Source: RMDB library OK1LIB, as collected in RNAgym. This 177-nucleotide RNA was probed chemically with 2A3. The reactions ran in a buffer of 150 mM KOAc, 10 mM MgCl2 and 150 mM bicine (pH 8.5), at 24 C.
[RMDB]
RNA sequence: GGGAACGACUCGAGUAGAGUCGAAAAGUCACACCUACAACACGUAGAAAGUAUGCAUGUGACCCUCUAGUAUAGCCCACAAUUACGCGAAUGCUUUCUCGCUACGUGUAAGGGAUUACUUUGAGUGCGGCCCUCUGCUAUUCGUAGCAGAGGGCCGAAAAGAAACAACAACAACAAC
Reactivity to 2A3 in 0.01 (KOAc 150mM, MgCl2 10mM, bicine 150mM(pH8.5), 24C), signal-to-noise 2, nucleotides 027 to 126: g040u000c000a040c010a000c090c040u020a110c070a140a050c070a070c270g080u040a070g010a020a080a000g100u110a040u110g000c010a030u040g070u090g010a010c000c000c040u000c030u070a030g000u010a110u060a160g040c000c010c010a040c020a090a110u140u130a040c050g000c010g090a110a060u210g030c030u030u170u090c040u060c050g060c050u000a000c000g010u000g000u000a060a200g040g000g000a000u110u000a030c000u010u100u040g040a070g000u150g010